[RMDB]
An RNA of 207 nucleotides, treated with 2A3 and DMS and read out base by base.
Conditions: 150 mM KOAc, 10 mM MgCl2 and 150 mM bicine (pH 8.5), 24 C.
Source: RMDB library OK3TST, as collected in RNAgym.
2A3 adducts were read by reverse transcription with SuperScript II with manganese.
RNA sequence: GGGAACGACUCGAGUAGAGUCGAAAACAACUGUUUCAUCUCUAAGUUGCCAAUGUGUUGUUCUCCCUCUGCUGAUUAUAAUUUUAUGUUGGAAUAUUGGAAAGGGAAGUAUUAAUUUUGGAGUCAGCAAGCCUGGAGCCAGGCAAUAGCAUAGUAAGUGAAAAUUACUAUUCGUAGUAAUUUUCACAAAAGAAACAACAACAACAAC
Reactivity to 2A3 in 0.01 (KOAc 150mM, MgCl2 10mM, bicine 150mM(pH8.5), 24C), signal-to-noise 4, nucleotides 027 to 156: c030a010a060c040u080g030u100u110u070c050a100u030c080u050c060u220a170a090g020u030u020g020c020c070a060a120u080g030u030g000u090u000g000u020u030c020u010c040c010c000u020c020u030g010c000u010g050a050u030u100a050u060a180a080u050u140u030u080a080u090g060u050u040g030g010a050a030u070a070u140u070g040g010a020a040a020g050g000g010a010a000g010u030a040u110u050a060a050u020u050u070u090g010g010a020g000u010c000a010g000c030a050a030g030c010c040u040g030g020a050g090c060c010a010g010g000c010a020a060u050a040g010c000a020u170a020g060u300a250a020
Reactivity to DMS in 0.01 (KOAc 150mM, MgCl2 10mM, bicine 150mM(pH8.5), 24C), signal-to-noise 2, nucleotides 027 to 156: c020a090a140c050u000g000u010u020u000c090a070u000c020u010c070u000a050a150g000u000u000g020c000c000a040a120u020g020u000g000u000u000g020u000u000c050u000c010c010c030u000c060u000g000c020u000g000a080u010u000a110u010a020a090u020u010u010u000a070u040g020u000u010g020g000a120a100u000a090u000u000g020g000a040a070a150g010g030g000a050a090g020u010a070u000u000a040a060u010u000u000u000g000g020a050g010u010c030a020g050c040a010a110g000c030c020u020g010g000a160g020c090c010a060g020g030c020a040a050u000a090g020c020a090u000a100g040u000a070a240

The 2A3 profile rests on 1,953 reads. Values cover nucleotides 27 to 156. For DMS the reverse transcriptase was MarathonRT.